[RMDB]
This 207-nucleotide RNA was probed chemically with 2A3. 2A3 adducts were read by reverse transcription with SuperScript II with manganese. It was measured as part of the RMDB library RNAMAK. High 2A3 reactivity points to a flexible backbone, as in loops and unpaired stretches. The RNA was probed in 150 mM KOAc, 10 mM MgCl2 and 150 mM bicine (pH 8.5) at 24 C. Values cover nucleotides 27 to 156.
RNA sequence: GGGAACGACUCGAGUAGAGUCGAAAACGGCGGGUUCGCCCGCCGAAAAAAGAUAUGGAACAUCAGAGGUGUAGACCCGAUUCCUACUCGGAAACGAGUAGGAUCGCUACACCGACGAAGAUGUUCCUAAGUCAAAAAAGUAGCGUUCGCGCUACAAGACUAACCCGUCUUUCGAGACGGGUUAGUCAAAAGAAACAACAACAACAAC
Reactivity to 2A3 in 0.01 (KOAc 150mM, MgCl2 10mM, bicine 150mM(pH8.5), 24C), signal-to-noise 1, nucleotides 027 to 156: c040g000g040c010g000g000g000u130u030c130g090c110c000c020g010c010c010g020a000a000a000a000a000a000g060a030u100a030u060g040g000a020a000c000a000u000c000a010g040a070g040g000u000g010u010a000g070a210c100c120c020g010a040u300u250c040c000u000a000c010u000c000g010g000a040a110a110c020g010a010g000u000a000g020g000a000u000c000g000c000u000a000c000a000c000c000g000a000c000g100a000a060g020a000u010g000u000u000c000c000u000a130a020g050u050c080a000a000a000a000a000a300g040u130a020g040c020g080u060u040c170g040c020g020c150u220a010c000a010a010